Source information: An RNA of 177 nucleotides, treated with 2A3 and DMS and read out base by base. For 2A3, 1,187 sequencing reads were counted. The DMS profile rests on 1,016 reads. The reactions ran in a buffer of 150 mM KOAc, 10 mM MgCl2 and 150 mM bicine (pH 8.5), at 24 C. 2A3 adducts were read by reverse transcription with SuperScript II with manganese.
RNA sequence: GGGAACGACUCGAGUAGAGUCGAAAACAUAUAGGAAGAAAAUGGACUAAAUCUCAGUUUUCCAUAAUUCGUUUGACAGGGACUGUGUCUUUCACAACCCGAUCAUGGACAAAGGCUGAAAGUUCAACCACGAAAGGUUAUUCGUAACCUUUCGUGGAAAAGAAACAACAACAACAAC
Reactivity to 2A3 in 0.01 (KOAc 150mM, MgCl2 10mM, bicine 150mM(pH8.5), 24C), signal-to-noise 2, nucleotides 027 to 126: c000a000u220a030u170a280g160g040a120a150g020a060a080a030a080u100g020g000a000c020u070a120a070a280u130c070u000c070a020g020u040u050u030u000c010c020a010u050a090a120u160u110c080g090u160u110u190g090a040c040a060g000g040g020a060c060u030g030u000g010u090c010u080u300u200c030a030c020a040a020c000c000c000g020a040u090c020a000u050g000g000a010c060a180a050a000g100g000c010u020g010a090a000a000g000u000u050c030a030a030
Reactivity to DMS in 0.01 (KOAc 150mM, MgCl2 10mM, bicine 150mM(pH8.5), 24C), signal-to-noise 2, nucleotides 027 to 126: c050a140u000a080u010a100g010g010a090a050g000a050a090a080a080u000g000g000a050c080u000a060a090a180u010c120u000c040a060g010u000u000u010u020c000c000a040u000a050a080u000u010c120g010u000u050u000g020a070c260a170g060g010g000a080c110u000g060u000g000u000c230u000u000u000c030a050c030a040a070c000c000c030g000a070u010c000a010u010g010g010a030c300a070a100a050g010g010c030u000g030a070a060a050g030u000u000c050a090a160